[RMDB]
RNA sequence: GGGAACGACUCGAGUAGAGUCGAAAAGAAGCGGCGAAAAAUGCGUGUAAAUAAAAGGUCAAUAUGACGUGACAGUGAUACCAAAUUAAAUGGGUCGAAGUCUCGCCAAAAUACGCAACAAAUAGAACCGUUAACAACUAUUCGUAGUUGUUAACGGAAAAGAAACAACAACAACAAC
Reactivity to DMS in 0.01 (KOAc 150mM, MgCl2 10mM, bicine 150mM(pH8.5), 24C), signal-to-noise 4, nucleotides 027 to 126: g010a090a100g030c050g020g000c050g000a040a090a090a130a090u010g010c030g040u000g010u010a060a080a100u010a020a080a100a060g000g010u010c080a050a080u020a100u000g020a010c010g000u000g000a000c000a040g010u030g020a010u000a050c010c000a020a080a150u010u010a040a100a110u010g010g000g000u000c000g010a090a190g000u000c010u000c010g020c020c020a010a070a050a040u000a030c040g000c020a040a060c160a040a040a050u010a100g000a110a120
Reactivity to 2A3 in 0.01 (KOAc 150mM, MgCl2 10mM, bicine 150mM(pH8.5), 24C), signal-to-noise 4, nucleotides 027 to 126: g110a030a010g060c070g050g000c040g060a060a050a000a020a030u060g000c060g010u060g030u090a040a120a110u090a030a130a050a010g130g000u040c020a040a060u120a100u220g030a010c010g020u030g000a010c000a010g020u040g130a010u120a300c010c010a040a010a050u150u140a040a090a060u100g020g000g000u010c000g000a060a010g010u000c000u010c020g000c000c000a000a100a010a010u100a010c020g000c010a000a050c020a030a170a040u150a050g110a070a010
Structure probing data (DMS and 2A3) for a 177-nucleotide construct. It was measured as part of the RMDB library M2PK90. 2A3 adducts were read by reverse transcription with SuperScript II with manganese. Conditions: 150 mM KOAc, 10 mM MgCl2 and 150 mM bicine (pH 8.5), 24 C.